[RMDB]
RNA sequence: GGGAACGACUCGAGUAGAGUCGAAAAUAUCUGGGACCAAGCGAUCACGAUGUACCCAUGAUUGCAAACACAAUGCUUAAUGUUGCCAAGAUAGGUCUCGCAAAUUCAACAGCCGAGCGGAUUGACCGACAGAGAUUCUCUUCGGAGAAUCUCUGUCAAAAGAAACAACAACAACAAC
Reactivity to 2A3 in 0.01 (KOAc 150mM, MgCl2 10mM, bicine 150mM(pH8.5), 24C), signal-to-noise 3, nucleotides 027 to 126: u140a010u000c050u090g000g010g010a010c000c020a070a010g030c010g040a020u060c000a040c140g110a130u130g000u240a210c000c010c010a020u090g050a020u000u060g000c020a030a110a050c110a020c050a100a110u120g000c030u130u100a140a030u190g000u020u040g040c030c000a110a010g030a250u090a090g030g020u000c000u010c010g000c000a170a220a120u170u150c050a060a020c010a080g080c040c050g080a010g000c020g000g070a050u040u140g020a070c110c000
Reactivity to DMS in 0.01 (KOAc 150mM, MgCl2 10mM, bicine 150mM(pH8.5), 24C), signal-to-noise 2, nucleotides 027 to 126: u000a020u000c010u000g040g010g000a090c030c150a060a250g030c010g000a050u000c010a070c160g000a140u000g030u000a120c060c060c050a130u030g010a080u000u000g010c070a080a130a140c250a010c240a130a040u070g000c050u000u000a020a060u000g000u000u000g030c140c040a040a020g000a110u000a100g000g000u000c000u000c100g060c190a010a030a070u000u070c160a020a120c220a040g020c020c090g010a100g000c030g000g000a190u040u000g010a060c040c050